An RNA of 207 nucleotides, treated with 2A3 and read out base by base. Conditions: 150 mM KOAc, 10 mM MgCl2 and 150 mM bicine (pH 8.5), 24 C. 2A3 adducts were read by reverse transcription with SuperScript II with manganese.
RNA sequence: GGGAACGACUCGAGUAGAGUCGAAAAUGACGCCUAUAACUGGAUGAAGCAUAUUAUACAAAAUGGUUUUGUAGGCAACCUUAAUAUGUAUAGUCUUGUCUGUAUCGUUACACGAUAAUCAAUUUAUAAAACAGCUCCCCCUUCGGGGGGAGCUGAACGGUAGUGAAAAGUUCGCUUUUCACUACCGAAAAGAAACAACAACAACAAC
Reactivity to 2A3 in 0.01 (KOAc 150mM, MgCl2 10mM, bicine 150mM(pH8.5), 24C), signal-to-noise 1, nucleotides 027 to 156: u060g040a030c040g000c000c000u020a020u000a020a020c060u040g000g000a020u020g000a000a020g000c000a000u030a000u010u020a020u060a150c110a190a160a040a140u300g000g000u020u010u000u040g020u020a000g000g000c000a000a000c000c010u010u010a000a000u000a000u010g000u000a000u010a020g010u000c000u030u040g140u050c110u140g120u020a020u020c000g000u020u070a070c120a010c030g010a010u030a050a070u070c020a010a070u040u190u190a260u300a100a150a010a060c000a000g000c000u020c000c050c000c000c010u030u020c040g020g000g000g000g000g020a000g000c020u000g010a000a000